[RMDB]
RNA sequence: GGGAACGACUCGAGUAGAGUCGAAAAGGACAAGUUAGCCAUCUAAUGUACAAUAUGAGCACUAUAGUUAAUACUGAAUUGUACUCAGGAUUUUUGCUAAAUGGGUAGCUUUUUGCUGCUCUUGCCACACAAGAAGGGUAAUUGUGAGAUGAUGGCACAUGCGGAUGCUAUUCGUAGCAUCCGCAUGAAAAGAAACAACAACAACAAC
Reactivity to 2A3 in 0.01 (KOAc 150mM, MgCl2 10mM, bicine 150mM(pH8.5), 24C), signal-to-noise 4, nucleotides 027 to 156: g090g020a030c020a010a050g100u080u070a010g050c010c010a010u000c010u060a100a090u100g060u060a030c040a030a030u060a070u180g080a040g000c040a020c050u120a070u050a190g060u080u180a110a040u080a150c000u020g040a030a040u160u090g030u030a070c030u010c050a000g010g050a090u030u020u020u060u160g030c010u060a050a060a030u200g000g000g020u040a030g020c010u000u060u060u180u300g000c000u010g030c010u020c000u010u030g000c040c000a040c000a020c020a120a030g090a080a070g100g010g050u110a070a130u030u030g000u030g010a030g010a060u060g000a010u020g030g000c030a000
Reactivity to DMS in 0.01 (KOAc 150mM, MgCl2 10mM, bicine 150mM(pH8.5), 24C), signal-to-noise 2, nucleotides 027 to 156: g000g040a070c060a120a150g030u000u000a070g000c010c010a010u000c000u010a040a130u000g020u010a030c080a050a160u000a180u000g020a070g050c040a020c010u030a250u000a120g010u000u000a120a190u000a120c050u020g000a210a050u010u000g010u010a110c020u000c080a120g000g010a130u000u000u000u000u040g000c020u010a050a080a120u010g020g000g000u000a000g010c000u000u000u010u000u000g040c000u000g020c020u020c030u000u000g020c020c050a110c090a030c050a000a040g000a060a070g000g020g030u000a040a300u010u000g020u010g000a070g010a200u000g000a050u000g010g090c020a160